RNA sequence: GGGAACGACUCGAGUAGAGUCGAAAAAAAAAAAACCGUUAUUUGGCAGUACACUUUUCUUGCGUCAAAAUCUCAUAAAUCUUUCCAGACGACGGUUUGACAAAAGCCGCCGUCUUUCUUUUUUCCAGUAUUUACACUAAUUCGUUAGUGUAAAUACAAAAGAAACAACAACAACAAC
Reactivity to 2A3 in 0.01 (KOAc 150mM, MgCl2 10mM, bicine 150mM(pH8.5), 24C), signal-to-noise 3, nucleotides 027 to 126: a000a010a000a000a010a000a000a030c050c030g030u090u020a180u150u070u060g080g030c000a030g070u090a030c040a060c080u090u090u130u080c020u040u040g050c010g020u010c000a030a110a090a140u040c040u020c040a050u130a190a260a140u060c040u050u040u050c050c080a010g000a000c010g000a000c010g000g000u010u000u010g040a030c060a010a150a000a000g010c020c000g000c010c000g060u000c000u000u030u000c000u020u120u040u010u010u020c030c000a000